[RMDB]
RNA sequence: GGGAACGACUCGAGUAGAGUCGAAAAGAUAUGGACCUUGUAGCUUCAACAGCUCGCAUCGGAAACGAUGCGAGACAUGAAGCCUAUUGAGGUCCUAAGUCAAAACUUCGCGCUUCGGCGCGAAGAAUCAUAGUGCACACUUCGGUGUGCACUAUGAAAAAGAAACAACAACAACAAC
Reactivity to 2A3 in 0.01 (KOAc 150mM, MgCl2 10mM, bicine 150mM(pH8.5), 24C), signal-to-noise 1, nucleotides 027 to 126: g000a010u070a010u190g010g010a000c000c010u000u000g070u040a020g000c000u010u000c010a140a140c060a260g030c000u000c000g000c030a000u030c000g070g090a080a030a070c010g000a000u000g010c000g020a010g000a000c000a040u070g000a010a000g090c000c000u070a090u080u300g060a010g000g000u000c000c000u010a050a010g070u020c030a050a020a130a170c020u010u000c010g030c000g010c020u000u120c300g170g030c000g000c000g010a010a000g000a000a030
Reactivity to DMS in 0.01 (KOAc 150mM, MgCl2 10mM, bicine 150mM(pH8.5), 24C), signal-to-noise 2, nucleotides 027 to 126: g010a070u000a300u000g000g000a020c000c000u000u000g010u000a040g020c000u010u000c000a030a060c300a300g000c010u000c010g000c000a010u010c000g000g000a130a120a130c000g010a040u000g000c000g040a000g000a020c070a150u000g000a010a010g000c120c010u000a010u000u000g000a020g030g010u000c000c000u000a020a100g000u010c010a130a070a190a150c000u000u000c000g010c000g030c010u000u020c220g030g010c020g000c010g010a000a000g000a030a110